[RMDB]
RNA sequence: GGGAACGACUCGAGUAGAGUCGAAAAGUCCGGUAGGGAUGGCACUAGGCGCUCCCGAACCGCCGAGUGCGCGACGCGUAUUCCUCGCAGGCCGCCCACAAGUCGCGGCGGUCAUAGUCGGGCCAGAAAAUACCCCAUCCUUCGGGAUGGGGUAUUUAAAAGAAACAACAACAACAAC
Reactivity to 2A3 in 0.01 (KOAc 150mM, MgCl2 10mM, bicine 150mM(pH8.5), 24C), signal-to-noise 2, nucleotides 027 to 126: g040u030c030c000g020g100u230a080g000g140g010a060u140g080g000c000a000c010u030a020g020g060c020g010c090u150c000c010c000g010a030a010c020c010g010c000c030g010a000g010u020g000c050g010c030g060a050c020g020c030g020u000a140u040u070c010c000u040c010g030c000a020g030g000c000c000g000c030c050c000a070c090a170a080g140u270c170g010c050g030g020c000g000g000u000c000a020u030a040g020u050c000g000g010g000c000c010a110g070a010
Reactivity to DMS in 0.01 (KOAc 150mM, MgCl2 10mM, bicine 150mM(pH8.5), 24C), signal-to-noise 2, nucleotides 027 to 126: g010u000c000c030g010g020u050a070g040g010g000a060u030g000g000c000a040c040u000a040g000g000c010g000c110u000c010c020c030g020a060a140c300c020g010c010c000g030a020g000u000g010c020g020c090g020a060c080g000c020g000u020a050u020u030c060c000u000c000g000c130a110g000g000c020c010g000c000c020c010a150c130a160a100g050u060c150g040c260g060g020c010g000g030u020c020a040u040a040g020u000c040g000g010g000c110c110a100g000a090
This 177-nucleotide RNA was probed chemically with 2A3 and DMS. The 2A3 profile rests on 1,164 reads.